[RMDB]
RNA sequence: GGGAACGACUCGAGUAGAGUCGAAAAUCGACGCUUCUUCGCAAAAUAAACCAGGGCGAUAUCAAAGGCGCAUGUGAUCAGCUGCGUCGCUGGACAUACGCUGGCGGUAAGCAAUGGAAAGGCCUGACAUCCGACAUGCAUUCGUGCAUGUCGGAUGAAAAGAAACAACAACAACAAC
Reactivity to 2A3 in 0.01 (KOAc 150mM, MgCl2 10mM, bicine 150mM(pH8.5), 24C), signal-to-noise 1, nucleotides 027 to 126: u100c050g030a000c000g000c050u030u010c000u070u030c030g040c020a160a060a030a060u200a060a180a050c010c040a040g070g060g000c050g150a200u030a010u090c010a020a000a030g020g000c010g000c030a000u040g050u020g130a300u070c030a010g040c010u100g120c140g300u210c080g010c000u000g000g000a020c000a020u010a020c020g000c020u010g020g010c000g000g010u010a000a030g000c000a040a040u070g030g030a090a090a020g120g040c020c020u030g000a000
Reactivity to DMS in 0.01 (KOAc 150mM, MgCl2 10mM, bicine 150mM(pH8.5), 24C), signal-to-noise 1, nucleotides 027 to 126: u000c080g000a110c070g010c000u000u000c060u010u010c130g000c090a090a060a080a040u010a080a090a120c060c030a030g010g000g000c020g000a080u000a050u000c000a050a300a120g000g000c000g020c030a020u000g000u020g040a110u030c040a030g030c010u000g000c130g040u020c150g070c090u000g000g020a020c010a030u010a010c000g020c000u000g000g020c300g000g000u010a010a140g000c020a010a030u000g010g020a110a000a130g040g000c010c000u000g040a270